[RMDB]
The data come from the RNA Mapping Database (RMDB), library OK2TRN. An RNA of 177 nucleotides, treated with DMS and 2A3 and read out base by base. 2A3 is a SHAPE reagent: it acylates the 2'-hydroxyl of flexible nucleotides of all four kinds. DMS adducts were read by reverse transcription with MarathonRT.
RNA sequence: GGGAACGACUCGAGUAGAGUCGAAAACGACACAGUACGACAUGGACUCAUGCGUACCAUGCUCAUGGUAGUACGUACGUGCUAGAGGAUCGAGUACCUCUAGCUAGCUAGGUGUCACACAUGCUAGUACAGUGACGCGAUUCGUCGCGUCACUGUAAAAAGAAACAACAACAACAAC
Reactivity to DMS in 0.01 (KOAc 150mM, MgCl2 10mM, bicine 150mM(pH8.5), 24C), signal-to-noise 2, nucleotides 027 to 126: c170g000a110c040a020c070a090g040u000a040c000g010a300c040a010u000g000g010a100c190u000c010a050u000g000c200g010u030a070c060c070a100u000g020c180u000c040a130u000g030g000u020a010g010u000a070c080g000u000a050c020g010u000g000c020u000a000g020a020g060g010a140u000c260g000a200g070u000a050c000c010u000c010u000a000g010c000u000a000g030c140u000a090g020g010u000g040u000c030a160c200a220c110a080u020g000c090u000a080g000
Reactivity to 2A3 in 0.01 (KOAc 150mM, MgCl2 10mM, bicine 150mM(pH8.5), 24C), signal-to-noise 1, nucleotides 027 to 126: c060g030a000c010a000c040a050g050u050a010c010g100a040c010a050u060g130g040a070c030u030c130a000u050g020c010g030u090a130c060c000a020u090g020c010u060c100a110u090g070g050u090a010g030u060a070c060g100u060a010c070g040u020g010c020u010a020g000a020g080g100a080u120c070g030a030g030u110a130c010c000u010c020u000a020g000c000u000a000g020c020u030a030g000g100u040g000u080c000a020c010a000c010a020u140g080c010u130a030g100

2A3 adducts were read by reverse transcription with SuperScript II with manganese.
The RNA was probed in 150 mM KOAc, 10 mM MgCl2 and 150 mM bicine (pH 8.5) at 24 C.